[RMDB]
RNA sequence: GGGAACGACUCGAGUAGAGUCGAAAAGUGUACGAGAUCACACGAGAGAGUUCUCGAUCACACACGUUCGAACACGUACGAGUGAGUGUACGUGAGAGAGAACUCUCUCACUCGUGUUCGAGUUCUCGAGUGAGUACGAUCGAGAUCUCACGUGUACAAUCAAUUCCCGAUUCGUCGGGAAUUGAUUAAAAGAAACAACAACAACAAC
Reactivity to DMS in 0.01 (KOAc 150mM, MgCl2 10mM, bicine 150mM(pH8.5), 24C), signal-to-noise 1, nucleotides 027 to 156: g010u000g020u000a120c000g010a070g020a120u000c090a050c010a120c060g000a110g000a040g020a110g040u000u000c000u000c000g030a260u000c030a080c010a090c010a020c050g030u020u020c060g020a100a100c070a070c080g060u010a070c050g010a110g000u000g000a090g010u010g040u000a040c170g020u000g000a040g000a300g000a070g010a070a080c020u000c030u000c020u000c020a000c000u000c000g010u000g030u000u010c040g010a110g010u010u000c010u000c010g000a040g030u000g020a170g020u010a100c070g010a100u000c000g000a100g030a030u000c020u010c020a130c010g040u000g040u020a110c100
Reactivity to 2A3 in 0.01 (KOAc 150mM, MgCl2 10mM, bicine 150mM(pH8.5), 24C), signal-to-noise 3, nucleotides 027 to 156: g070u060g020u050a010c000g020a020g020a150u150c050a010c010a010c110g010a010g000a010g000a010g040u000u000c000u000c020g010a020u000c000a000c000a010c000a000c040g040u080u080c060g090a140a010c120a020c140g060u250a050c040g030a040g080u110g060a150g000u050g040u050a110c140g000u020g000a020g000a000g000a020g010a010a000c000u000c000u000c000u000c000a000c010u000c000g010u010g010u020u060c040g000a010g010u040u020c030u010c020g020a020g010u150g010a070g070u180a080c080g020a100u060c020g020a000g010a060u020c000u000c000a040c040g110u110g030u000a080c080